[RMDB]
RNA sequence: GGGAACGACUCGAGUAGAGUCGAAAAACUGACUGGUACGACAAGAGGCAGUGAUAGCGGCCUGAUAAUGGGCGAGGUCUACAACAAUGGCUAUCCGACGCAAUACGGAAAUAUUUUACGUCUGACCCCACCCGGGACCAUUCGUGGUCCCGGGUGGAAAAGAAACAACAACAACAAC
Reactivity to 2A3 in 0.01 (KOAc 150mM, MgCl2 10mM, bicine 150mM(pH8.5), 24C), signal-to-noise 2, nucleotides 027 to 126: a000c030u020g150a000c000u060g000g120u130a030c000g070a140c170a160a000g030a090g280g050c020a000g060u060g090a000u030a050g000c050g050g000c000c000u130g130a190u170a300a230u260g040g000g100c070g040a030g070g000u040c090u100a010c040a030a000c000a090a120u100g090g000c000u040a000u000c000c000g050a030c130g000c000a000a020u000a050c000g210g050a000a090a000u090a070u060u020u080u050a030c000g000u000c030u130g100a170c090c000